The record gives the reactivity of an RNA of 177 nucleotides to 2A3 and DMS. Values cover nucleotides 27 to 126. The RNA was probed in 150 mM KOAc, 10 mM MgCl2 and 150 mM bicine (pH 8.5) at 24 C.

[RMDB]
RNA sequence: GGGAACGACUCGAGUAGAGUCGAAAAGCAGUACGGUUCGCCGUACUGCAAAGGCACAUGCAAAACCGGUGGGAAACCAUAAACGGAAAGCCUAGCAUGAAAAAACAGGGACCUUCGGGUCCCUGAACACAAGGUUAUACUUCGGUAUAACCUUGUGAAAAGAAACAACAACAACAAC
Reactivity to 2A3 in 0.01 (KOAc 150mM, MgCl2 10mM, bicine 150mM(pH8.5), 24C), signal-to-noise 3, nucleotides 027 to 126: g000c000a010g010u000a000c000g040g020u010u100c200g010c060c000g020u000a000c000u000g000c000a040a000a000g020g000c060a050c010a170u030g010c010a020a020a010a130c010c010g000g020u020g000g010g020a050a030a010c000c000a010u100a060a300a020c010g000g010a100a040a020g010c000c050u030a020g000c020a010u020g010a090a100a030a010a000a000c000a000g010g000g000a000c000c020u090u160c260g090g000g000u000c000c000c000u000g000a000a000
Reactivity to DMS in 0.01 (KOAc 150mM, MgCl2 10mM, bicine 150mM(pH8.5), 24C), signal-to-noise 3, nucleotides 027 to 126: g010c010a010g010u000a000c000g000g020u000u010c270g040c010c010g040u000a000c010u000g000c010a020a030a090g010g020c040a110c030a030u000g000c000a030a080a120a110c010c010g020g000u000g000g010g000a140a080a160c020c000a040u010a080a090a290c040g020g000a110a050a130g000c030c060u010a120g000c020a000u000g000a000a040a040a120a110a210c000a000g000g000g010a010c000c000u000u010c210g000g010g010u000c020c000c000u000g000a020a070